Conditions: 150 mM KOAc, 10 mM MgCl2 and 150 mM bicine (pH 8.5), 24 C.
Structure probing data (DMS and 2A3) for a 177-nucleotide construct.
RNA sequence: GGGAACGACUCGAGUAGAGUCGAAAAUGGUUGUUUCACCUAGGACGAGGACAUGGCAUCCUAUUACCAGCCAUUGCACGAAAUUAAUAUGAUGCCACGUCCUCAUACUAGAUGAAACAACCACAUCGCUAUAGUUUUUCUUCGGAAAAACUAUAGCAAAAGAAACAACAACAACAAC
Reactivity to DMS in 0.01 (KOAc 150mM, MgCl2 10mM, bicine 150mM(pH8.5), 24C), signal-to-noise 2, nucleotides 027 to 126: u000g010g000u010u000g020u000u000u000c000a010c010c000u010a010g000g010a140c200g010a020g010g020a030c010a040u000g000g000c000a000u000c010c050u000a000u000u000a050c240c160a170g010c060c200a100u000u010g010c140a130c170g010a110a110a070u010u000a010a010u000a000u000g000a010u000g010c000c000a020c020g010u000c010c000u000c010a000u000a060c000u000a010g000a020u000g000a020a010a010c020a010a010c020c000a010c080a050u020c140
Reactivity to 2A3 in 0.01 (KOAc 150mM, MgCl2 10mM, bicine 150mM(pH8.5), 24C), signal-to-noise 3, nucleotides 027 to 126: u030g000g000u000u000g000u010u010u000c010a010c010c000u000a010g020g000a010c040g000a000g000g010a010c010a000u010g000g010c010a010u000c010c010u020a000u010u010a040c040c030a030g070c060c050a200u060u290g050c070a050c140g100a110a040a020u110u030a010a000u030a000u020g000a000u000g000c020c000a000c010g010u010c000c010u000c000a000u000a000c000u000a000g000a000u000g010a000a000a000c000a000a000c000c000a000c000a010u020c030
For 2A3, 7,627 sequencing reads were counted.